[RMDB]
RNA sequence: GGGAACGACUCGAGUAGAGUCGAAAAAGCCACAAACAGUCACAAGGUAAGCUUAGUAUGGUGUGUGGGUUUCGAGGGCUGACUAAAAAGUUAAAAAAAGCUGUCUUAAGCUUGCGGAUGGUGGUUACGAUGUCUAUCGGUUCGCCGAUAGACAUCGAAAAGAAACAACAACAACAAC
Reactivity to DMS in 0.01 (KOAc 150mM, MgCl2 10mM, bicine 150mM(pH8.5), 24C), signal-to-noise 1, nucleotides 027 to 126: a090g000c010c030a070c150a030a080a150c150a070g000u000c070a070c070a120a070g000g010u010a110a080g000c060u000u000a050g010u000a060u000g030g020u000g030u000g010u000g000g000g000u000u000u020c080g030a060g020g050g010c040u000g010a080c040u000a070a030a070a140a080g010u030u020a000a020a070a030a070a030a070g000c050u010g000u000c100u040u000a050a060g030c000u000u000g030c040g010g000a030u000g020g050u030g000g020u000u000a110
An RNA of 177 nucleotides, treated with DMS and read out base by base. Conditions: 150 mM KOAc, 10 mM MgCl2 and 150 mM bicine (pH 8.5), 24 C. For DMS, 1,060 sequencing reads were counted. Reactivities are rounded to 0.1 and cut off at 0 and 3. For DMS the reverse transcriptase was MarathonRT.